[RMDB]
RNA sequence: GGGAACGACUCGAGUAGAGUCGAAAAGGAGAUCGAAGAGGACCGACGUCAGCACGGUCAGGAUGUAGGUCCGCAUGCAUCCGAGUUGACGAAACUUCACGAUUUCCAAAGCGGACAAGAAGUCAAAAGUAGCGUGCGUAUUCGUACGCACGCUACUAAAAGAAACAACAACAACAAC
Reactivity to 2A3 in 0.01 (KOAc 150mM, MgCl2 10mM, bicine 150mM(pH8.5), 24C), signal-to-noise 1, nucleotides 027 to 126: g000g000a000g000a000u030c060g070a300a100g010a290g070g160a000c010c020g020a020c010g130u180c060a000g130c080a000c090g300g020u040c050a030g010g000a000u000g000u000a000g000g100u000c000c000g050c040a000u040g000c000a000u050c000c000g000a050g000u000u000g010a000c010g060a010a010a000c000u000u020c050a000c100g000a000u000u000u000c000c000a000a080a000g000c000g000g030a000c030a000a000g060a060a010g150u090c250a090a070a000
About this RNA: The data come from the RNA Mapping Database (RMDB), library OK1LIB. Chemical mapping of a 177-nucleotide RNA with 2A3. Values are in units of 0.01, from 0 to 300, in steps of 10. The reactions ran in a buffer of 150 mM KOAc, 10 mM MgCl2 and 150 mM bicine (pH 8.5), at 24 C. As a SHAPE reagent, 2A3 marks flexible, mostly unpaired nucleotides at the ribose 2'-OH.